Structure probing data (DMS) for a 177-nucleotide construct. The RNA was probed in 150 mM KOAc, 10 mM MgCl2 and 150 mM bicine (pH 8.5) at 24 C. For DMS, 2,182 sequencing reads were counted. Source: RMDB library TTRDEL, as collected in RNAgym. For DMS the reverse transcriptase was MarathonRT.
[RMDB]
RNA sequence: GGGAACGACUCGAGUAGAGUCGAAAAGAUAUGGAGAAGCUACCCACCGAACUACACUGAGGUGUCGGAAACGACAUGUAGGUGCGAGGCUUCUCCUAAGUCAAAGAGUGUGCUUCGGCACACUCAAUCAGCGAUAUAGGUUCGCCUAUAUCGCUGAAAAAGAAACAACAACAACAAC
Reactivity to DMS in 0.01 (KOAc 150mM, MgCl2 10mM, bicine 150mM(pH8.5), 24C), signal-to-noise 3, nucleotides 027 to 126: g010a070u000a100u010g000g000a040g010a030a020g010c000u000a110c080c050c050a300c060c020g000a050a040c050u020a100c030a050c130u020g000a150g000g020u000g010u000c000g020g000a040a040a060c000g010a000c000a020u000g010u000a060g000g000u000g000c010g000a160g000g010c010u000u000c000u000c000c000u010a010a050g010u010c120a100a100a080g010a030g020u000g020u000g000c000u000u020c180g040g000c010a030c000a000c010u000c000a010a050